[RMDB]
RNA sequence: GGGAACGACUCGAGUAGAGUCGAAAACUGGCUGAUGUUGAAGCGGACGUCGCAGCACGUGCUGAUGACGAAGGCUUCAUCACAUUAAAGAACAAUCUAUAUAGAUUGGUUUGGCAUGUUGAGCGUAAUAACUACUAGUUCGCUAGUAGUAAAAGAAACAACAACAACAAC
Reactivity to DMS in 0.01 (KOAc 150mM, MgCl2 10mM, bicine 150mM(pH8.5), 24C), signal-to-noise 6, nucleotides 027 to 129: c000u020g000g000c090u000g000a090u020g000u000u000g030a020a030g000c000g000g000a300c000g000u020c010g030c010a000g030c040a300c300g050u060g000c000u000g030a070u020g040a030c020g000a030a210g020g040c040u050u010c000a050u030c060a000c040a080u040u030a050a120a150g020a060a080c020a000a000u010c020u040a150u010a070u070a000g020a000u010u030g000g000u030u030u020g010g030c080a090u000g000u000u000g000a070g020c150g020u000a080a090u010a110
Reactivity to 2A3 in 0.01 (KOAc 150mM, MgCl2 10mM, bicine 150mM(pH8.5), 24C), signal-to-noise 9, nucleotides 027 to 129: c030u020g130g020c030u060g030a130u030g030u030u010g000a000a000g000c000g020g160a020c000g000u000c000g000c020a010g000c020a060c300g240u300g000c010u000g020a300u120g010a010c010g010a140a030g040g000c000u000u010c000a010u000c000a010c010a040u090u200a160a090a030g040a020a030c000a000a010u000c020u030a110u040a070u110a300g010a020u020u040g060g100u060u040u100g040g000c090a060u040g000u000u040g030a040g030c050g030u080a080a060u070a160